[RMDB]
RNA sequence: GGGAACGACUCGAGUAGAGUCGAAAAGAUAUGGAUCCCAUGUAGGUUCACAGACGUUGAAAUCGGAAACGAUGGAGUCUGUAGACUGAGGUGGGAUCCUAAGUCAAAACGGCGGUUCGCCGCCGAAGUUAGCUUUUAAGUUCGCUUAAAAGCUAACAAAAGAAACAACAACAACAAC
Reactivity to DMS in 0.01 (KOAc 150mM, MgCl2 10mM, bicine 150mM(pH8.5), 24C), signal-to-noise 5, nucleotides 027 to 126: g020a040u000a300u010g000g000a010u000c000c000c010a010u000g010u000a270g000g000u000u010c050a020c000a010g000a010c000g010u010u020g010a060a140a020u010c000g000g000a120a090a190c010g000a000u000g000g000a100g000u000c000u000g000u010a020g000a000c000u000g000a120g020g010u000g000g000g000a010u000c000c010u000a000a060g010u010c030a060a070a150a200c020g010g010c000g000g010u010u010c220g020c010c000g000c000c000g010a030a050
Reactivity to 2A3 in 0.01 (KOAc 150mM, MgCl2 10mM, bicine 150mM(pH8.5), 24C), signal-to-noise 3, nucleotides 027 to 126: g020a010u070a040u120g000g000a000u000c010c000c000a020u230g020u030a010g010g010u050u070c030a000c000a000g020a010c020g190u300u090g020a030a030a000u000c000g010g010a060a060a050c020g000a010u000g000g020a020g010u010c020u010g010u010a010g000a010c020u020g000a050g050g170u010g000g000g000a000u000c000c000u000a000a000g000u000c000a000a000a110a150c010g000g010c010g040g050u080u100c270g040c110c000g000c000c000g010a040a000
Source: RMDB library TTRDEL, as collected in RNAgym. This 177-nucleotide RNA was probed chemically with DMS and 2A3. For 2A3, 10,809 sequencing reads were counted. Conditions: 150 mM KOAc, 10 mM MgCl2 and 150 mM bicine (pH 8.5), 24 C. Values are in units of 0.01, from 0 to 300, in steps of 10.